[RMDB]
RNA sequence: GGGAACGACUCGAGUAGAGUCGAAAAGAUAUGGAGCGCCAUGGAGGGUGUCGGAAACGACACCCCCUUGAAGUGGUCGCUCCUAAGUCAAAACCGUUCAGAAUGAGUUCGCUCAUUCUGAACGGAACUAAUGGGAUACGUUCGCGUAUCCCAUUAGAAAAGAAACAACAACAACAAC
Reactivity to DMS in 0.01 (KOAc 150mM, MgCl2 10mM, bicine 150mM(pH8.5), 24C), signal-to-noise 4, nucleotides 027 to 126: g000a040u000a300u000g010g000a030g010c000g000c010c000a030u000g000g020a060g000g000g010u000g000u000c000g000g000a080a090a160c010g010a010c000a010c000c000c000c010c000u000u010g020a080a170g030u000g000g000u010c040g010c000u000c000c010u000a000a060g010u010c020a090a100a120a190c010c010g000u000u010c000a000g010a020a000u000g000a010g020u000u010c200g010c000u000c000a000u000u000c000u000g010a000a000c000g000g000a010a070
Reactivity to 2A3 in 0.01 (KOAc 150mM, MgCl2 10mM, bicine 150mM(pH8.5), 24C), signal-to-noise 3, nucleotides 027 to 126: g030a010u060a050u180g020g000a000g000c000g020c020c010a030u110g050g030a110g030g010g020u000g000u000c010g010g030a080a080a040c020g000a010c010a010c000c000c000c010c020u010u120g100a160a000g030u030g020g060u300c070g010c000u000c000c000u010a010a000g010u000c020a000a010a110a210c000c000g000u000u000c000a000g020a000a010u010g000a000g050u060u180c250g110c160u000c000a000u010u030c000u000g000a010a000c000g000g010a010a000